[RMDB]
RNA sequence: GGGAACGACUCGAGUAGAGUCGAAAACAUUUUUACGAGACCUUCAGUAGACUUAUUGCUUGAAAAAGGUUGGCGCGCUGAAUCAAUCGCUGUGGCGACUGGCGAACAGCUCACUCAGGUCGCGGCAGAGACAUGCAUUAUUCGUAAUGCAUGUCUCAAAAGAAACAACAACAACAAC
Reactivity to 2A3 in 0.01 (KOAc 150mM, MgCl2 10mM, bicine 150mM(pH8.5), 24C), signal-to-noise 6, nucleotides 027 to 126: c010a040u130u130u150u240u260a080c080g020a030g030a070c010c000u000u040c040a030g010u030a030g040a060c020u100u140a090u260u270g060c070u040u080g090a070a030a040a020a040g050g000u030u020g060g000c030g000c010g000c040u050g060a050a060u130c050a080a070u080c070g020c050u070g020u050g120g010c020g070a120c070u060g040g010c000g020a060a050c030a040g020c020u010c020a030c010u050c020a020g020g030u030c010g000c010g040g020c040a040
Reactivity to DMS in 0.01 (KOAc 150mM, MgCl2 10mM, bicine 150mM(pH8.5), 24C), signal-to-noise 5, nucleotides 027 to 126: c070a060u020u000u010u010u000a110c060g020a130g000a030c030c010u010u000c050a070g010u000a080g000a090c040u000u000a130u010u010g000c080u000u010g000a040a100a100a080a040g010g010u010u000g000g010c020g010c140g000c020u010g000a060a060u000c120a090a130u000c060g010c010u000g040u000g020g000c030g010a050c040u010g010g000c030g020a060a090c130a070g000c060u000c070a030c060u010c080a050g010g010u000c010g020c030g010g020c140a100